[RMDB]
RNA sequence: GGGAACGACUCGAGUAGAGUCGAAAAUAGUACACUUGUUCGGUCCUUACAGCAAGGGAAGGAUCUCAUCCAUUCCCUCAGCAUUACCAACAGUUUAAGGCUGCUUCACUGCUUUCAGGGUUUGGUACCAAUACCACUCCUUCGGGAGUGGUAUUGGAAAAGAAACAACAACAACAAC
Reactivity to 2A3 in 0.01 (KOAc 150mM, MgCl2 10mM, bicine 150mM(pH8.5), 24C), signal-to-noise 2, nucleotides 027 to 126: u130a010g130u080a020c060a030c060u020u130g040u080u060c070g000g020u000c030c010u020u070a020c050a030g160c050a120a140g050g050g000a010a010g030g020a040u030c110u090c220a080u010c010c000a180u010u000c000c020c000u000c010a020g010c000a040u030u060a030c020c020a020a050c040a060g000u050u020u070a060a010g110g000c010u010g000c000u110u100c070a090c130u030g030c050u040u100u150c060a030g040g050g080u050u000u070g030g020u030a090
Reactivity to DMS in 0.01 (KOAc 150mM, MgCl2 10mM, bicine 150mM(pH8.5), 24C), signal-to-noise 3, nucleotides 027 to 126: u000a070g020u020a080c090a070c060u000u000g010u000u000c160g010g000u000c110c090u000u000a110c130a120g010c070a210a030g000g000g000a020a030g000g010a030u000c190u010c190a090u000c020c000a100u000u000c000c000c000u000c140a030g020c020a050u000u000a090c110c080a050a040c030a050g000u000u000u000a100a090g010g010c020u000g000c110u000u000c090a060c100u000g010c030u000u000u000c070a070g020g020g000u000u010u000g000g010u000a110
Structure probing data (2A3 and DMS) for a 177-nucleotide construct. The RNA was probed in 150 mM KOAc, 10 mM MgCl2 and 150 mM bicine (pH 8.5) at 24 C. The 2A3 profile rests on 1,469 reads. DMS (dimethyl sulfate) methylates the pairing face of unpaired adenines and cytosines. Source: RMDB library OK2TRN, as collected in RNAgym.